[RMDB]
RNA sequence: GGGAACGACUCGAGUAGAGUCGAAAACCGGCCGACUACUAUGAGCAGCUGGUGGCUAAGCUUGCGAAUCGUAUCACUUGGAGCCGUCCUUUCGACGCCUCUUUCUUCCAGUAUCUUCGCCGGCAAGCGGUUCAUUAGUCUUCGGACUAAUGAACCGAAAAGAAACAACAACAACAAC
Reactivity to 2A3 in 0.01 (KOAc 150mM, MgCl2 10mM, bicine 150mM(pH8.5), 24C), signal-to-noise 2, nucleotides 027 to 126: c000c000g010g030c010c010g070a080c020u070a030c010u040a100u270g100a020g070c030a010g000c010u070g010g100u030g060g000c020u060a120a000g020c000u050u060g010c010g070a040a010u140c050g030u110a030u130c040a030c100u040u140g040g020a020g040c030c000g020u010c010c030u100u240u180c080g020a030c020g020c000c000u040c000u070u110u020c010u080u030c010c010a000g020u060a050u030c010u030u020c040g010c040c000g030g000c020a030a000g100
Reactivity to DMS in 0.01 (KOAc 150mM, MgCl2 10mM, bicine 150mM(pH8.5), 24C), signal-to-noise 3, nucleotides 027 to 126: c050c020g020g010c040c000g010a040c070u010a070c040u000a050u000g000a120g040c040a030g020c020u000g000g010u010g000g030c070u010a080a140g010c010u010u010g030c010g000a090a050u000c130g020u000a050u000c100a050c120u010u030g000g020a060g000c170c020g020u010c020c180u010u010u000c080g010a050c040g020c280c000u020c020u010u000u000c060u010u000c090c090a090g020u000a040u000c050u000u010c070g010c020c010g000g020c070a190a060g000